[RMDB]
Background:
The record gives the reactivity of an RNA of 177 nucleotides to 2A3 and DMS. Source: RMDB library OK2TRN, as collected in RNAgym. The reactions ran in a buffer of 150 mM KOAc, 10 mM MgCl2 and 150 mM bicine (pH 8.5), at 24 C. 2A3 adducts were read by reverse transcription with SuperScript II with manganese. Reactivities are given for positions 27 through 126.

RNA sequence: GGGAACGACUCGAGUAGAGUCGAAAAUCAUAUGCUUGGCGUUUAUUCGCAUCAGCAUUGACAUAAUUACCACUAGCUUUUGUGUCAGCUUUAUCAGCAAUGGCACGUUUUAAAGCUGUCAUCGCAGGUUCAUUAGUCAGUUCGCUGACUAAUGAACAAAAGAAACAACAACAACAAC
Reactivity to 2A3 in 0.01 (KOAc 150mM, MgCl2 10mM, bicine 150mM(pH8.5), 24C), signal-to-noise 6, nucleotides 027 to 126: u020c000a010u030a020u300g000c010u030u120g060g000c030g130u070u130u160a230u300u130c010g000c000a100u110c030a020g000c010a000u000u020g000a000c000a040u250a110a120u180u140a080c010c010a010c100u090a020g020c010u000u050u100u190g020u000g010u000c000a020g020c050u090u100u100a220u230c090a010g010c040a100a240u040g020g000c000a010c040g010u050u030u010u140a020a030a010g010c020u010g060u070c150a210u110c080g060c130a040g010
Reactivity to DMS in 0.01 (KOAc 150mM, MgCl2 10mM, bicine 150mM(pH8.5), 24C), signal-to-noise 6, nucleotides 027 to 126: u010c030a030u010a010u000g010c010u000u010g030g000c000g010u000u020u010a200u030u010c010g020c000a140u010c080a040g010c000a000u000u000g000a030c100a090u000a080a100u010u010a170c010c010a200c230u010a030g020c010u000u000u000u000g020u000g020u000c000a040g000c010u000u000u000a100u020c300a060g030c010a100a080u000g010g000c030a010c040g010u000u000u010u000a020a030a040g010c010u000g020u000c120a040u000c110g020c240a090g010